An RNA of 207 nucleotides, treated with 2A3 and read out base by base. The 2A3 profile rests on 902 reads.
[RMDB]
RNA sequence: GGGAACGACUCGAGUAGAGUCGAAAAACUGACGGUACGCCGUCAGAACGGUAGAAAAGAUGGUUUGAAAACCACGCCUUCUACCAAUAUAGUAAACAAAUAGGCGGAGCGGUCAUACGUGACCGCAAAAACAUAUUCAGCUUCGGCUGAAUAUGAAGCGUAAUGUAUGCUUCGGCAUACAUUACGCAAAAGAAACAACAACAACAAC
Reactivity to 2A3 in 0.01 (KOAc 150mM, MgCl2 10mM, bicine 150mM(pH8.5), 24C), signal-to-noise 2, nucleotides 027 to 156: a000c000u000g010a000c000g000g000u050a030c160g050c030c000g000u000c000a000g000a020a000c020g000g000u010a010g000a010a010a000a000g110a300u030g000g060u000u060u160g160a160a130a010a020c000c000a010c020g020c000c000u000u040c000u000a000c000c000a000a000u100a000u030a010g190u140a050a070a050c050a020a060a070u070a010g000g000c010g000g040a020g000c000g000g000u000c000a010u060a120c190g070u080g000a000c000c000g000c010a000a000a000a000a000c000a000u000a000u020u000c000a000g000c010u030u090c160g140g000c000u020g000a000a000u010a000u000g000a070a020
The RNA was probed in 150 mM KOAc, 10 mM MgCl2 and 150 mM bicine (pH 8.5) at 24 C.
The data come from the RNA Mapping Database (RMDB), library M2RFPK.